[RMDB]
Source: RMDB libraries RFM100 and RFMREP, as collected in RNAgym. The record gives the reactivity of an RNA of 177 nucleotides to DMS and 2A3. Reactivities are given for positions 27 through 126. For 2A3 the reverse transcriptase was SuperScript II with manganese.
RNA sequence: GGGAACGACUCGAGUAGAGUCGAAAAUGGCUGUGAUGACAAACAAACCUCGUUUCUCGAUGCUGAGACUUGAUUUGUUCAAGGACCAGAACUGUGCUGACCUUAAUUUGUGCGUGUCUGAGCCACACACUCGCUAAGCUUUCGAGCUUAGCGAGUGAAAAGAAACAACAACAACAAC
Reactivity to DMS in 0.01 (KOAc 150mM, MgCl2 10mM, bicine 150mM(pH8.5), 24C), signal-to-noise 3, nucleotides 027 to 126: u010g010g010c010u000g040u010g000a050u000g000a030c080a120a150a030c080a010a020a100c100c030u020c110g000u000u010u000c010u010c000g030a170u020g000c020u000g000a090g000a150c010u010u020g000a040u000u040u020g000u010u010c060a020a040g010g000a100c050c030a010g000a070a090c100u010g000u010g010c050u000g010a080c040c040u000u020a100a110u000u010u010g010u020g030c220g010u010g010u000c050u020g000a030g010c000c010a030c240a120
Reactivity to 2A3 in 0.01 (KOAc 150mM, MgCl2 10mM, bicine 150mM(pH8.5), 24C), signal-to-noise 5, nucleotides 027 to 126: u090g040g000c030u010g040u040g140a050u050g020a050c050a050a100a000c020a020a080a030c020c020u030c030g040u020u120u010c050u020c010g080a130u180g050c060u050g050a050g000a120c000u000u000g030a020u090u060u200g160u140u050c020a040a020g050g050a070c020c020a020g010a090a060c030u060g040u090g070c040u060g050a090c010c020u100u140a090a130u110u080u050g040u030g030c080g030u020g030u060c050u060g040a010g010c000c000a020c000a000